The record gives the reactivity of an RNA of 177 nucleotides to 2A3. It was measured as part of the RMDB library RFM100. 2A3 adducts were read by reverse transcription with SuperScript II with manganese. The reactions ran in a buffer of 150 mM KOAc, 10 mM MgCl2 and 150 mM bicine (pH 8.5), at 24 C.

RNA sequence: GGGAACGACUCGAGUAGAGUCGAAAACGUCAGGCGAUCGACGUUAAUGAAGCAAAUCCAUAAUUGCCAAUGAUGAGCAAUUCGCUAUUGCCGCCUAAAAACGGUUAGCCGGGGCUGCUAGAGCCUUGUCACGCGACAAUUUCGAUUGUCGCGUGACAAAAGAAACAACAACAACAAC
Reactivity to 2A3 in 0.01 (KOAc 150mM, MgCl2 10mM, bicine 150mM(pH8.5), 24C), signal-to-noise 1, nucleotides 027 to 126: c020g000u030c010a000g070g040c000g030a130u020c030g000a020c010g020u000u030a100a090u240g030a000a000g000c000a000a000a000u030c000c000a080u040a060a020u040u000g000c020c000a140a160u270g060a080u020g000a150g010c000a000a010u030u030c040g010c020u000a010u040u110g070c010c000g000c000c000u060a050a030a000a010a000c020g000g000u050u010a010g000c000c140g030g050g000g000c000u010g020c030u020a010g010a010g030c000c000u000u000